An RNA of 177 nucleotides, treated with DMS and 2A3 and read out base by base. For 2A3 the reverse transcriptase was SuperScript II with manganese.
RNA sequence: GGGAACGACUCGAGUAGAGUCGAAAACUUAAAGUAAGUGAAAGCAUACUGGCAAACCUACUUGAAAUGGGUGCAAAGAGAAAAUUAUGGUGGGCUUCGGACCACAAACGCCUUGAGAUGAUGAUAAUCUUCUUAGAUUCUUCGGAAUCUAAGAAGAAAAAGAAACAACAACAACAAC
Reactivity to DMS in 0.01 (KOAc 150mM, MgCl2 10mM, bicine 150mM(pH8.5), 24C), signal-to-noise 7, nucleotides 027 to 126: c030u000u020a050a060a060g000u010a020a060g010u010g000a100a080a150g000c040a100u010a080c090u010g010g020c070a070a140a090c050c010u000a040c060u020u010g000a060a110a160u010g000g000g020u000g000c100a080a090a130g010a130g000a060a070a070a080u020u030a060u020g010g010u000g000g000g020c070u010u040c160g020g010a050c030c010a020c020a010a050a060c090g010c050c020u000u010g010a090g010a070u010g000a050u010g000a080u020a070a120
Reactivity to 2A3 in 0.01 (KOAc 150mM, MgCl2 10mM, bicine 150mM(pH8.5), 24C), signal-to-noise 5, nucleotides 027 to 126: c030u050u090a170a020a050g040u040a040a030g010u040g180a160a030a020g030c000a060u110a100c050u070g050g000c020a090a010a070c000c010u020a030c040u070u110g040a030a110a110u170g000g010g030u020g030c040a040a130a030g170a020g040a070a100a020a000u230u140a070u170g080g000u030g000g020g000c000u070u070c110g050g050a040c000c020a010c000a000a100a000c030g000c010c000u050u060g050a060g000a070u120g000a020u050g010a010u050a120a040

Source information: It was measured as part of the RMDB libraries RFM100 and RFMREP. Reactivities are given for positions 27 through 126.